Structure probing data (2A3 and DMS) for a 177-nucleotide construct.
The 2A3 profile rests on 4,078 reads.
The data come from the RNA Mapping Database (RMDB), library OK2TST.
Values are in units of 0.01, from 0 to 300, in steps of 10.
Reactivities are given for positions 27 through 126.
[RMDB]
RNA sequence: GGGAACGACUCGAGUAGAGUCGAAAAGCUUACAAUUUUAGCGUCUUGUGCGUUUGGUAUUCCUUUGCAAUUCGAUAAAGUCUAUACCGAAGGUAUCAGCAAAAUUACUGCACAAGAUGUGAAGUAAACUAAUCCGUCAUUUCGAUGACGGAUUAGUAAAAGAAACAACAACAACAAC
Reactivity to 2A3 in 0.01 (KOAc 150mM, MgCl2 10mM, bicine 150mM(pH8.5), 24C), signal-to-noise 4, nucleotides 027 to 126: g020c050u070u100a070c080a110a210u120u100u130u200a030g010c000g020u010c020u000u010g020u010g000c030g080u080u070u060g020g000u010a020u060u080c010c000u040u000u000g000c040a110a180u150u050c050g090a110u090a160a130a030g040u000c030u060a080u030a080c000c040g030a030a000g030g000u060a040u090c040a020g090c020a050a030a000a060u120u080a050c060u170g000c010a010c000a010a000g000a010u010g000u010g000a050a010g030u080a050a090
Reactivity to DMS in 0.01 (KOAc 150mM, MgCl2 10mM, bicine 150mM(pH8.5), 24C), signal-to-noise 4, nucleotides 027 to 126: g010c080u010u010a050c090a140a120u020u000u000u010a220g010c000g010u000c000u010u000g010u000g010c010g020u010u010u000g010g000u000a020u010u000c100c040u010u000u000g020c040a170a210u000u000c120g010a090u000a020a040a070g000u000c070u010a040u000a020c100c010g000a030a190g010g000u000a030u010c110a110g000c130a040a030a070a050u010u000a010c050u000g030c000a020c000a010a020g010a020u000g010u000g000a080a080g000u010a050a060